The record gives the reactivity of an RNA of 207 nucleotides to 2A3 and DMS. The data come from the RNA Mapping Database (RMDB), library OK3TST. 2A3 adducts were read by reverse transcription with SuperScript II with manganese. The RNA was probed in 150 mM KOAc, 10 mM MgCl2 and 150 mM bicine (pH 8.5) at 24 C. For DMS, 2,500 sequencing reads were counted. Values are in units of 0.01, from 0 to 300, in steps of 10.

[RMDB]
RNA sequence: GGGAACGACUCGAGUAGAGUCGAAAAUGAUGACUGGUGGAUACCAUCAGAAAUGGUAGUUCUGUUGAAAAAGAGCACAAGUUUCCUGUUUAAAAAACUGCAAGAUAACACGCCAGCUGAUGUUACCGAACUUGUAGUAGGAAGCAUUAGUACGCAAGUCAUCCAUAAUCUUCGGAUUAUGGAUGACAAAAGAAACAACAACAACAAC
Reactivity to 2A3 in 0.01 (KOAc 150mM, MgCl2 10mM, bicine 150mM(pH8.5), 24C), signal-to-noise 3, nucleotides 027 to 156: u130g060a030u080g050a050c030u050g000g010u030g040g000a120u080a160c020c020a020u050c060a020g100a050a100a010u100g040g010u040a110g010u040u050c040u080g070u080u020g090a070a080a020a010a030g050a010g000c030a010c010a070a030g020u000u010u010c010c000u060g130u070u160u170a070a170a010a000a010a020c040u030g020c040a000a080g010a160u090a090a020c040a010c100g040c050c030a040g010c050u050g010a050u020g010u060u020a020c000c010g030a060a030c030u050u170g070u100a050g000u020a000g010g020a030a000g000c000a010u010u000a010g060u060a040c080g020c040a080a010
Reactivity to DMS in 0.01 (KOAc 150mM, MgCl2 10mM, bicine 150mM(pH8.5), 24C), signal-to-noise 2, nucleotides 027 to 156: u000g040a070u020g010a170c020u000g030g100u010g010g020a220u030a030c020c010a020u000c060a190g000a090a170a080u010g010g000u000a030g020u010u000c020u010g000u000u010g000a090a130a080a130a070g050a080g040c010a060c030a030a080g020u010u000u050c060c010u000g020u000u000u010a000a070a030a110a100a070c060u010g010c050a080a090g000a240u010a050a070c050a040c000g010c040c030a120g020c050u000g010a030u000g010u000u000a170c010c030g010a110a260c130u000u010g020u020a090g000u000a090g000g010a040a050g000c000a050u030u020a080g040u010a030c040g010c050a050a300